[RMDB]
RNA sequence: GGGAACGACUCGAGUAGAGUCGAAAACAGCGGCUACAACAUGAACCCUGUCUUCAUAUACAUGGUGCCGAAGCCCUGCCCCCGCGUGCGUAUCGUGCUCCCCGGUUUGUGCGCUCGGCCGGUACGCCACCCUCCCGGUAUUCGUACCGGGAGGGUGAAAAGAAACAACAACAACAAC
Reactivity to DMS in 0.01 (KOAc 150mM, MgCl2 10mM, bicine 150mM(pH8.5), 24C), signal-to-noise 1, nucleotides 027 to 126: c040a050g010c160g030g020c000u000a080c100a090a100c140a130u010g010a100a060c040c040c030u000g020u000c100u000u020c190a060u010a180u010a060c070a050u000g010g000u000g000c040c100g020a100a060g000c010c010c020u000g010c020c010c000c020c040g000c080g010u000g010c000g020u000a010u000c010g000u000g000c040u000c010c030c050c030g000g020u000u000u000g010u000g020c000g020c070u000c050g020g030c020c020g000g000u000a000c020g010c030
Conditions: 150 mM KOAc, 10 mM MgCl2 and 150 mM bicine (pH 8.5), 24 C. An RNA of 177 nucleotides, treated with DMS and read out base by base.